RNA sequence: GGGAACGACUCGAGUAGAGUCGAAAAGCGCGCGGUCUGCGGCAGGCAGAAAUUCAUAUUUGCGCCACGCGGCGCGGCGGCCUCUCCUCGCUAUUGCGCGUUGCCGUUCACAGAGCUGCCUCCAGGGCACAAAGAAGGCAUUCGUGCCUUCUUUGUGAAAAGAAACAACAACAACAAC
Reactivity to 2A3 in 0.01 (KOAc 150mM, MgCl2 10mM, bicine 150mM(pH8.5), 24C), signal-to-noise 9, nucleotides 027 to 126: g040c020g000c000g000c010g020g060u060c070u070g020c010g080g040c040a050g060g000c010a010g120a070a100a020u190u120c090a070u110a150u230u150u160g020c010g010c010c010a070c080g130c120g010g000c010g000c000g040g010c010g010g020c000c010u030c020u020c020c010u040c020g020c040u080a090u140u170g020c040g000c020g030u030u040g030c010c010g050u100u090c070a080c010a060g040a020g030c020u020g010c000c000u020c010c010a040g010g010g000
Reactivity to DMS in 0.01 (KOAc 150mM, MgCl2 10mM, bicine 150mM(pH8.5), 24C), signal-to-noise 7, nucleotides 027 to 126: g010c030g000c010g020c020g010g010u010c040u010g010c070g000g000c180a060g010g010c020a060g010a040a050a080u020u030c170a100u050a130u020u020u010g020c060g010c010c020a090c170g010c150g010g010c010g000c020g010g010c040g010g000c020c040u010c050u010c030c020u010c100g010c050u010a070u020u020g010c020g000c040g010u010u010g000c020c030g030u000u000c050a070c110a100g010a100g000c040u000g010c000c010u010c030c040a160g010g000g000
The data come from the RNA Mapping Database (RMDB), libraries RFM100 and RFMREP. This 177-nucleotide RNA was probed chemically with 2A3 and DMS.